Notes:
An RNA of 177 nucleotides, treated with 2A3 and DMS and read out base by base. It was measured as part of the RMDB library OK2TST. For 2A3, 5,303 sequencing reads were counted. The RNA was probed in 150 mM KOAc, 10 mM MgCl2 and 150 mM bicine (pH 8.5) at 24 C. The DMS profile rests on 20,919 reads. DMS adducts were read by reverse transcription with MarathonRT.

RNA sequence: GGGAACGACUCGAGUAGAGUCGAAAAUAGUAAGGACUCUUACUUUGAUACUUGUGUGUUUAAUACUGCGUGCACCACUCUUACAGGUCUUGGUGGUACAAUUGUAUAUUGUGCAAAGCAAGGUUUAUCUUAUCUUAUGUUUCGACAUAAGAUAAGAAAAAGAAACAACAACAACAAC
Reactivity to 2A3 in 0.01 (KOAc 150mM, MgCl2 10mM, bicine 150mM(pH8.5), 24C), signal-to-noise 5, nucleotides 027 to 126: u090a020g060u030a050a040g080g080a230c060u030c000u290u030a030c000u130u040u140g140a130u100a090c040u080u040g010u000g000u010g040u130u090u200a100a060u080a060c040u050g040c030g040u010g010c030a010c020c000a020c020u010c010u020u140a100c060a110g010g090u030c030u080u110g080g000u030g020g010u010a020c020a030a070u040u050g090u050a070u020a030u180u070g010u010g030c050a150a030a050g030c020a030a010g060g000u030u080u050a060
Reactivity to DMS in 0.01 (KOAc 150mM, MgCl2 10mM, bicine 150mM(pH8.5), 24C), signal-to-noise 9, nucleotides 027 to 126: u000a060g010u000a050a040g010g010a150c270u020c010u000u000a020c010u000u010u010g010a130u000a070c090u000u000g010u010g010u010g010u000u010u000a060a060u010a070c070u000g010c150g010u000g010c040a040c020c020a040c060u000c060u000u010a120c210a090g000g000u000c060u000u000g010g020u000g000g010u000a010c010a020a060u000u010g020u000a070u010a060u000u000g010u000g000c020a040a070a120g010c030a030a070g000g000u000u000u000a100